[RMDB]
RNA sequence: GGGAACGACUCGAGUAGAGUCGAAAAGAUAUGGAGUACUACCCACCGAUACCUGGACGACGAAGGAGUGACAGCUCGGAAACGAGCUGUCACUCCAGAGUCCAUGUAUCGAGGUACUCCUAAGUCAGAUUAACCUCUUGUUCGCAAGAGGUUAAUCAAAAGAAACAACAACAACAAC
Reactivity to DMS in 0.01 (KOAc 150mM, MgCl2 10mM, bicine 150mM(pH8.5), 24C), signal-to-noise 1, nucleotides 027 to 126: g000a090u000a170u010g010g050a020g030u000a040c030u010a050c050c010c010a300c280c000g000a010u000a000c000c110u000g000g000a000c020g010a100c270g010a140a140g000g030a020g030u030g030a000c000a010g030c000u020c000g020g030a070a120a180c030g040a050g050c000u000g040u000c000a000c000u000c000c000a000g000a030g010u000c000c000a000u000g010u000a000u000c000g000a030g050g000u000a000c020u000c000c000u010a010a030g010u010c200a100